[RMDB]
RNA sequence: GGGAACGACUCGAGUAGAGUCGAAAAUGAAAUAGCGUAAUCGACAUUGAGAAUGAACGCUAAGUGUGUGUUGUAUGGGUAAGGUCCAAUUGAACACACACACAGUUGGACCUAAUGUCGAAAAAAAUCUGGAGAUAUUCUUCGGAAUAUCUCCAGAAAAAGAAACAACAACAACAAC
Reactivity to 2A3 in 0.01 (KOAc 150mM, MgCl2 10mM, bicine 150mM(pH8.5), 24C), signal-to-noise 2, nucleotides 027 to 126: u160g020a040a040a090u120a010g070c040g060u080a080a080u040c020g010a010c020a060u020u030g020a030g010a090a130u170g020a050a010c000g040c040u030a090a070g000u010g000u000g020u010g020u000u060g090u150a180u060g070g030g020u090a060a100g140g050u050c000c000a040a010u050u070g080a080a010c010a020c010a000c010a000c010a000c000a020g080u150u100g040g030a000c000c000u050a020a000u000g000u030c000g060a130a010a000a010a000a000a020
Reactivity to DMS in 0.01 (KOAc 150mM, MgCl2 10mM, bicine 150mM(pH8.5), 24C), signal-to-noise 2, nucleotides 027 to 126: u000g020a080a090a110u000a080g020c060g010u000a080a060u000c000g000a040c010a010u010u030g000a120g000a080a150u010g010a100a040c060g000c040u000a050a070g010u000g060u010g010u000g000u000u000g020u010a100u000g000g000g000u000a050a110g020g020u000c000c020a010a060u000u000g000a030a050c030a010c030a010c050a030c060a030c030a030g010u010u010g020g000a150c030c010u000a030a000u000g000u010c000g010a000a000a020a130a100a030a090
Source information
Structure probing data (2A3 and DMS) for a 177-nucleotide construct. 2A3 adducts were read by reverse transcription with SuperScript II with manganese. For DMS, 1,485 sequencing reads were counted. Source: RMDB library M2PK90, as collected in RNAgym. For DMS the reverse transcriptase was MarathonRT.